[RMDB]
Chemical mapping of a 207-nucleotide RNA with 2A3.
RNA sequence: GGGAACGACUCGAGUAGAGUCGAAAAUGCAUAUUGCUGAGCCUUUUCAAGUCCCAUAUUUGUAACUAUUUUAUGAUAUAUUAAGUCAUGUUGAGAUGUUAUUUUAGCAGUAGUAUACCCAGAGGUUCCAUUAGCAACUUUAUAACCUUCUACAAUAACCAGUAAAUGACUUCGGUCAUUUACUGGUAAAAGAAACAACAACAACAAC
Reactivity to 2A3 in 0.01 (KOAc 150mM, MgCl2 10mM, bicine 150mM(pH8.5), 24C), signal-to-noise 1, nucleotides 027 to 156: u030g000c000a000u040a060u140u180g030c000u010g090a030g040c000c080u000u020u100u130c090a100a030g000u010c120c020c070a050u130a140u030u070u050g060u000a030a000c010u090a140u100u100u140u110a000u110g000a000u000a100u090a070u300u130a300a040g000u000c010a000u010g140u190u110g070a130g000a020u060g030u060u010a130u010u140u010u090a060g010c000a000g000u040a000g010u030a000u030a040c000c000c160a030g030a090g000g030u070u110c060c010a000u090u080a030g000c000a100a000c000u060u180u000a040u080a060a130c040c000u050u240c000u120a010c030a030a120u300a080
The reactions ran in a buffer of 150 mM KOAc, 10 mM MgCl2 and 150 mM bicine (pH 8.5), at 24 C.
It was measured as part of the RMDB library OK3TST.
The 2A3 profile rests on 365 reads.